[RMDB]
RNA sequence: GGGAACGACUCGAGUAGAGUCGAAAAUACGAAAGUGGUGAUAGUAUCCCCAUCCAAUUCAUCCGUGAUUUCGCCAAGGAAGUUUCCAAGGGGUGGGUCAUUGACUCCAUCGGUGGCGUAUAUGAUGCAAUCUACCCCAGUUCGCUGGGGUAGAUUGAAAAGAAACAACAACAACAAC
Reactivity to 2A3 in 0.01 (KOAc 150mM, MgCl2 10mM, bicine 150mM(pH8.5), 24C), signal-to-noise 4, nucleotides 027 to 126: u140a010c050g050a070a040a050g060u090g050g000u070g020a070u020a070g070u080a060u030c000c000c000c000a030u040c010c030a040a080u060u060c030a010u000c010c010g100u060g070a110u040u090u130c030g000c000c000a030a020g030g020a090a120g140u060u160u000c050c000a050a080g060g060g040g000u010g010g010g000u010c040a110u040u280g030a060c040u040c080c020a030u010c050g070g040u040g000g030c010g050u030a030u010a030u170g090a020u060g030
Reactivity to DMS in 0.01 (KOAc 150mM, MgCl2 10mM, bicine 150mM(pH8.5), 24C), signal-to-noise 4, nucleotides 027 to 126: u050a030c030g010a150a130a110g030u010g000g000u000g000a050u000a120g020u010a190u000c050c020c000c070a100u010c040c090a080a190u010u020c060a030u020c010c080g010u020g010a040u010u010u000c020g020c040c000a100a190g000g010a060a160g010u030u000u010c030c030a130a180g010g000g010g010u000g000g000g000u000c030a090u020u020g000a040c010u020c030c010a030u010c030g020g020u020g010g000c040g010u030a020u020a060u030g000a110u030g000
The data come from the RNA Mapping Database (RMDB), library OK1LIB. Structure probing data (2A3 and DMS) for a 177-nucleotide construct. Values cover nucleotides 27 to 126. The RNA was probed in 150 mM KOAc, 10 mM MgCl2 and 150 mM bicine (pH 8.5) at 24 C. The 2A3 profile rests on 2,212 reads.